The record gives the reactivity of an RNA of 177 nucleotides to DMS and 2A3. 2A3 adducts were read by reverse transcription with SuperScript II with manganese.
RNA sequence: GGGAACGACUCGAGUAGAGUCGAAAAGCAAUAGAGCUUUGAGUCAAAUUACUGUCCGGAAAUUAUAGAGAUGAAGCUCAUUUGGAGCAAUAACAAUUGUUGAAGCUCCGAAAAUGAUGCUCUUCCCCUGGAGUACAGUUUUCGAACUGUACUCCAGAAAAGAAACAACAACAACAAC
Reactivity to DMS in 0.01 (KOAc 150mM, MgCl2 10mM, bicine 150mM(pH8.5), 24C), signal-to-noise 3, nucleotides 027 to 126: g000c010a020a070u010a150g000a040g010c000u010u000u010g010a120g000u000c020a140a090a070u030u000a180c030u000g020u030c290c130g010g070a110a060a100u000u030a160u040a130g000a250g000a120u040g000a050a050g010c000u000c020a230u000u000u000g000g010a020g010c010a030a090u010a020a000c030a300a210u050u010g020u020u010g020a060a290g010c000u000c000c010g010a010a000a120a130u030g010a080u020g010c010u000c100u000u000c000c000c000
Reactivity to 2A3 in 0.01 (KOAc 150mM, MgCl2 10mM, bicine 150mM(pH8.5), 24C), signal-to-noise 6, nucleotides 027 to 126: g000c010a020a130u100a160g030a010g010c000u020u030u100g060a050g080u060c020a010a050a120u150u100a140c080u110g140u200c070c030g070g150a120a060a060u290u200a180u140a110g070a010g000a040u150g080a040a000g000c000u000c000a010u010u010u050g000g000a000g000c010a030a040u100a070a020c060a060a270u180u300g060u050u010g050a100a020g000c000u000c000c000g010a000a010a000a030u170g040a060u110g000c020u000c030u030u020c000c000c000
It was measured as part of the RMDB libraries RFM100 and RFMREP.